[RMDB]
RNA sequence: GGGAACGACUCGAGUAGAGUCGAAAAGAUAUGGAUAGUGAAGCGAAGAACUGGUGGAUACAUCGGAAACGAUUAAGCACCAGGGAGCUUUCACUAUCCUAAGUCAAAAGAUCCCUUCGGGGAUCAAGAUGACAUUCAUGUUCGCAUGAAUGUCAUCAAAAGAAACAACAACAACAAC
Reactivity to DMS in 0.01 (KOAc 150mM, MgCl2 10mM, bicine 150mM(pH8.5), 24C), signal-to-noise 2, nucleotides 027 to 126: g010a010u000a140u020g000g000a000u000a000g040u000g010a010a030g000c000g000a080a150g000a100a210c000u000g000g020u000g000g030a170u030a100c240a020u000c000g010g000a030a030a090c010g010a020u010u010a090a150g000c000a010c010c010a000g000g000g000a030g000c000u000u010u010c000a010c010u000a000u000c000c000u010a000a050g000u000c010a060a080a140a110g010a010u000c000c000c000u000u000c160g040g020g020g010a010u000c000a030a060
Reactivity to 2A3 in 0.01 (KOAc 150mM, MgCl2 10mM, bicine 150mM(pH8.5), 24C), signal-to-noise 2, nucleotides 027 to 126: g010a010u040a000u100g010g000a000u000a010g010u000g000a020a000g000c040g240a300a030g010a080a000c000u000g010g040u000g000g040a100u120a300c170a090u050c010g000g020a020a020a000c010g000a000u040u130a170a060g100c010a010c000c000a000g010g000g010a000g000c000u150u270u090c000a000c000u000a000u000c000c000u000a000a010g020u000c000a050a060a020a110g010a000u000c000c000c000u000u000c300g030g010g000g000a000u000c000a000a030
This 177-nucleotide RNA was probed chemically with DMS and 2A3. Source: RMDB library TTRDEL, as collected in RNAgym. For 2A3 the reverse transcriptase was SuperScript II with manganese. The 2A3 profile rests on 4,890 reads. The RNA was probed in 150 mM KOAc, 10 mM MgCl2 and 150 mM bicine (pH 8.5) at 24 C.